[RMDB]
RNA sequence: GGGAACGACUCGAGUAGAGUCGAAAAGACGAAGAUGUCGCGGUGCGUGCUGAAUUUCCGUUUCACCACGAACGUUUCGAGCAACCCGACGAAUUCCCGACGCCCCGGCGCAUCGGUCGUAAACCAGGAUCAACGAAUCUUUCGAGAUUCGUUGAUCAAAAGAAACAACAACAACAAC
Reactivity to DMS in 0.01 (KOAc 150mM, MgCl2 10mM, bicine 150mM(pH8.5), 24C), signal-to-noise 2, nucleotides 027 to 126: g020a080c030g010a060a130g000a080u000g020u010c040g030c050g010g000u000g000c050g030u010g020c150u000g010a080a020u000u000u020c130c100g010u000u000u000c140a110c130c050a070c050g000a060a100c070g020u000u000u000c040g020a080g000c020a090a100c060c010c000g050a050c090g020a080a120u000u000c020c050c000g030a120c040g000c000c030c000c040g020g010c030g000c040a050u000c020g010g020u000c010g010u000a040a080a180c020c040a150g000
Reactivity to 2A3 in 0.01 (KOAc 150mM, MgCl2 10mM, bicine 150mM(pH8.5), 24C), signal-to-noise 2, nucleotides 027 to 126: g050a010c030g010a060a030g010a040u060g080u220c060g000c020g030g030u020g020c050g000u020g020c030u090g020a100a090u070u070u000c050c000g010u020u000u040c130a100c080c030a030c100g020a090a000c070g050u000u090u110c030g030a030g000c040a060a040c030c040c020g000a020c030g010a010a030u020u020c000c000c010g010a030c010g040c000c020c000c000g070g000c010g000c010a020u040c020g070g140u040c010g020u040a180a000a020c010c000a030g120
Structure probing data (DMS and 2A3) for a 177-nucleotide construct.
For 2A3, 2,092 sequencing reads were counted.
DMS adducts were read by reverse transcription with MarathonRT.
The reactions ran in a buffer of 150 mM KOAc, 10 mM MgCl2 and 150 mM bicine (pH 8.5), at 24 C.
Source: RMDB library OK2TST, as collected in RNAgym.